[RMDB]
RNA sequence: GGGAACGACUCGAGUAGAGUCGAAAAGAUAUGGAUCGUAAAGGAGAGGUGUGGCGUGUCGGAAACGACAGCCACACUACCCACCUCCGAUUGCGAUCCUAAGUCAAAAGUCUUCUUCGGAAGACAAGGCAUAAUCCCUGUUCGCAGGGAUUAUGCCAAAAGAAACAACAACAACAAC
Reactivity to DMS in 0.01 (KOAc 150mM, MgCl2 10mM, bicine 150mM(pH8.5), 24C), signal-to-noise 1, nucleotides 027 to 126: g000a010u000a300u000g000g000a050u020c010g020u000a000a040a150g000g000a010g010a060g010g000u000g000u000g000g020c000g000u000g020u000c000g000g000a110a170a280c000g010a000c030a140g000c000c000a000c000a010c000u000a050c060c040c120a300c060c000u000c000c000g000a220u000u000g010c030g000a000u000c000c000u000a040a040g000u000c020a020a130a080a060g000u000c000u000u000c000u000u000c280g060g000a030a010g000a000c010a020a100
Reactivity to 2A3 in 0.01 (KOAc 150mM, MgCl2 10mM, bicine 150mM(pH8.5), 24C), signal-to-noise 1, nucleotides 027 to 126: g060a000u070a030u220g020g000a000u000c000g010u020a000a030a060g030g030a000g010a010g000g000u040g000u030g010g050c290g120u120g000u030c030g000g000a100a000a020c020g010a010c020a000g040c020c000a010c010a010c000u000a000c000c000c000a040c010c000u000c020c000g020a120u170u010g000c040g060a020u030c000c000u000a070a030g100u020c020a010a060a080a110g010u000c010u000u030c010u000u140c300g240g030a000a020g010a000c020a020a010